Chemical mapping of a 177-nucleotide RNA with DMS and 2A3. 2A3 adducts were read by reverse transcription with SuperScript II with manganese. 2A3 is a SHAPE reagent: it acylates the 2'-hydroxyl of flexible nucleotides of all four kinds.
RNA sequence: GGGAACGACUCGAGUAGAGUCGAAAAUGUCUUUUUGGAGCAUCAAACAAAGGUAUACAAGGCUACAUAAAUGAAGAAAUGAUAUCUUUUCUUCAGACGUAAUCAACAUUACCAGGGAAGAUAUGAAUGAACAUUCAUCGUUCGCGAUGAAUGUUCAAAAAGAAACAACAACAACAAC
Reactivity to DMS in 0.01 (KOAc 150mM, MgCl2 10mM, bicine 150mM(pH8.5), 24C), signal-to-noise 2, nucleotides 027 to 126: u000g010u000c000u000u020u010u000u000g040g010a060g020c040a060u010c070a160a070a090c130a090a080a130g000g000u000a080u000a120c160a120a230g000g000c090u000a010c040a080u000a070a040a080u030g010a020a010g020a000a020a060u000g020a230u060a070u000c020u000u000u000u000c000u000u000c000a000g030a090c250g030u000a040a030u000c040a020a110c120a070u000u000a010c020c040a110g000g000g000a030a040g000a030u000a050u010g010a090a110
Reactivity to 2A3 in 0.01 (KOAc 150mM, MgCl2 10mM, bicine 150mM(pH8.5), 24C), signal-to-noise 1, nucleotides 027 to 126: u040g010u000c000u000u130u040u120u050g110g010a060g030c060a050u040c090a020a060a060c040a030a090a000g060g010u000a020u010a060c070a060a080g040g000c030u000a010c010a030u160a140a070a050u060g000a000a000g010a030a080a000u080g060a040u000a070u270c000u020u020u000u000c000u000u000c010a000g020a010c070g020u000a030a050u000c020a010a070c010a110u030u060a000c030c010a000g020g130g000a000a010g050a010u030a040u090g100a100a080